[RMDB]
RNA sequence: GGGAACGACUCGAGUAGAGUCGAAAAAUUUACAUACAAGUAAUUUUGGGCUAUUGUCACAAUUCAAAUCUACCUUCAUAGGAGAAACAUUCAUGAUUAUGGAUAUACAUGGAACCAUGCUGUAUAGACAAUUCCAAUCAAAAUGCUCCACAUUGCAUCAUUUAAUACGAUUCGUCGUAUUAAAUGAAAAAGAAACAACAACAACAAC
Reactivity to DMS in 0.01 (KOAc 150mM, MgCl2 10mM, bicine 150mM(pH8.5), 24C), signal-to-noise 4, nucleotides 027 to 156: a070u010u000u010a060c050a130u010a190c120a110a170g010u000a030a060u010u010u000u000g020g030g020c050u000a010u000u000g000u000c040a120c020a070a130u000u000c060a040a110a140u000c020u000a090c020c020u000u000c080a100u010a130g010g010a130g010a140a080a080c060a070u000u010c060a070u010g000a090u000u000a110u000g010g010a070u010a100u000a070c050a090u010g020g010a100a100c070c030a090u000g000c080u000g010u000a070u000a130g010a030c030a080a080u000u000c020c010a050a100u020c020a030a070a040a090u010g000c020u010c020c020a070c120a130u010u000g030c050a180
Reactivity to 2A3 in 0.01 (KOAc 150mM, MgCl2 10mM, bicine 150mM(pH8.5), 24C), signal-to-noise 8, nucleotides 027 to 156: a000u080u090u080a020c010a020u210a050c030a100a090g040u090a070a090u060u070u090u100g030g000g000c060u060a030u070u060g020u050c030a030c060a170a100u120u080c030a060a070a140u000c020u080a220c020c000u100u180c070a100u200a110g020g030a010g040a050a120a030c020a030u080u160c020a030u100g050a070u070u160a040u190g040g020a020u040a010u020a180c040a040u070g050g040a040a040c060c010a020u100g020c040u030g060u100a060u060a090g030a010c010a030a020u080u010c020c010a010a020u040c040a040a070a050a100u060g020c030u040c040c030a070c030a100u050u210g020c010a020
The data come from the RNA Mapping Database (RMDB), library OK3TST. The record gives the reactivity of an RNA of 207 nucleotides to DMS and 2A3. Reactivities are rounded to 0.1 and cut off at 0 and 3. The RNA was probed in 150 mM KOAc, 10 mM MgCl2 and 150 mM bicine (pH 8.5) at 24 C. Values cover nucleotides 27 to 156. For 2A3, 6,822 sequencing reads were counted. For DMS the reverse transcriptase was MarathonRT.